The record gives the reactivity of an RNA of 177 nucleotides to DMS. It was measured as part of the RMDB library M2PK90.

RNA sequence: GGGAACGACUCGAGUAGAGUCGAAAAAAAAAGGUUGUGGCAGAGGAGGCUGGUCAUACUAUUGUGGAGGACUAAAGAAUGUAAGAGAAGUCAUAGGCCUAACAAAAGGAGGACCAGGACAAAAAAAUCUGUUAUAUUGGUUCGCCAAUAUAACAGAAAAAGAAACAACAACAACAAC
Reactivity to DMS in 0.01 (KOAc 150mM, MgCl2 10mM, bicine 150mM(pH8.5), 24C), signal-to-noise 2, nucleotides 027 to 126: a020a050a050a070a040g010g020u000u000g010u000g010g000c060a110g000a050g000g010a060g020g000c010u010g000g010u000c020a040u000a090c040u000a100u000u000g020u010g020g000a060g010g000a050c020u010a030a100a140g000a010a030u000g010u000a140a090g020a190g000a090a100g000u000c020a110u000a080g030g000c000c010u000a050a040c040a010a050a100a020g000g010a060g000g000a010c050c020a010g010g000a060c030a000a000a030a080a050a050a140